[RMDB]
RNA sequence: GGGAACGACUCGAGUAGAGUCGAAAACAAUUGAGCGUCGCACACACACUGACUAAGUCUGACACUGACAGAGCCUAAACCGCUCUGUCAGUGUGCGAGAUAUCGUUCUUAAUGUGAGCAGAGGAAACACUCCAGUACGAUUCGUCGUACUGGAGUGAAAAGAAACAACAACAACAAC
Reactivity to DMS in 0.01 (KOAc 150mM, MgCl2 10mM, bicine 150mM(pH8.5), 24C), signal-to-noise 5, nucleotides 027 to 126: c070a110a160u010u000g010a050g030c060g030u000c040g020c020a070c060a070c030a060c050a070c130u010g000a040c040u010a080a140g010u000c020u010g000a040c020a010c000u000g000a010c000a000g000a010g020c000c010u000a020a070a130c300c300g000c000u000c000u000g010u000c000a000g000u000g000u000g010c050g010a030g000a060u000a170u000c050g000u000u000c030u000u010a070a110u000g020u010g010a060g000c070a050g020a080g010g010a100a050a140
Reactivity to 2A3 in 0.01 (KOAc 150mM, MgCl2 10mM, bicine 150mM(pH8.5), 24C), signal-to-noise 3, nucleotides 027 to 126: c010a030a210u080u240g030a060g060c060g050u020c060g020c010a000c010a010c010a010c010a010c060u020g030a010c010u090a130a030g030u000c020u020g030a010c010a000c000u000g000a000c000a010g010a000g000c000c000u020a060a030a050c020c010g000c000u000c000u010g000u000c000a010g000u000g000u000g000c000g040a030g000a010u060a010u090c080g040u120u020c000u040u150a190a100u140g020u010g040a020g010c070a030g030a030g050g120a050a110a040

This 177-nucleotide RNA was probed chemically with DMS and 2A3. For 2A3, 3,657 sequencing reads were counted. The RNA was probed in 150 mM KOAc, 10 mM MgCl2 and 150 mM bicine (pH 8.5) at 24 C. For DMS, 4,860 sequencing reads were counted. It was measured as part of the RMDB library M2PK90.